[RMDB]
RNA sequence: GGGAACGACUCGAGUAGAGUCGAAAAGCGUACUACUGUGCUUGGAUUUACAAAGGGAGCUAACCUAAGCCUAUCCCAAAUAGGAUAGGCGAAGGUUAGCGAAGAACUUUGUUGUCAGCACAGUAUCGCAAAAGGCUGACUGUUCGCAGUCAGCCAAUCCAUUUUCUAGUUUCGACUAGAAAAUGGAAAAAGAAACAACAACAACAAC
Reactivity to DMS in 0.01 (KOAc 150mM, MgCl2 10mM, bicine 150mM(pH8.5), 24C), signal-to-noise 2, nucleotides 027 to 156: g010c010g030u010a020c070u000a000c000u010g030u010g000c010u020u020g040g050a040u020u000u000a010c010a010a010a050g000g010g000a300g000c010u000a040a000c000c000u010a020a300g000c000c000u000a010u000c000c000c030a030a140a240u000a030g000g000a030u000a010g000g010c000g000a030a020g000g000u000u000a000g070c000g010a010a040g000a100a140c000u000u000u000g000u010u010g020u000c000a080g060c000a020c000a020g000u000a000u000c000g010c020a020a070a100a120g010g030c000u010g010a020c010u000g020u000u010c300g010c000a060g030u000c000a010g010c000c010a000a050
Reactivity to 2A3 in 0.01 (KOAc 150mM, MgCl2 10mM, bicine 150mM(pH8.5), 24C), signal-to-noise 5, nucleotides 027 to 156: g010c010g040u080a060c050u000a000c010u020g010u010g030c030u100u150g190g000a090u300u300u090a010c000a000a000a010g000g020g000a030g000c020u000a000a000c000c000u020a060a010g000c000c010u000a010u020c010c010c030a140a270a150u300a070g000g000a000u000a010g000g000c000g000a000a000g000g000u000u000a000g010c000g010a000a000g010a010a000c000u000u000u000g000u000u020g000u020c000a000g000c000a000c000a000g000u000a000u020c010g000c000a090a140a000a020g010g000c000u000g000a000c000u010g060u100u160c300g000c140a000g000u000c000a000g000c000c000a000a000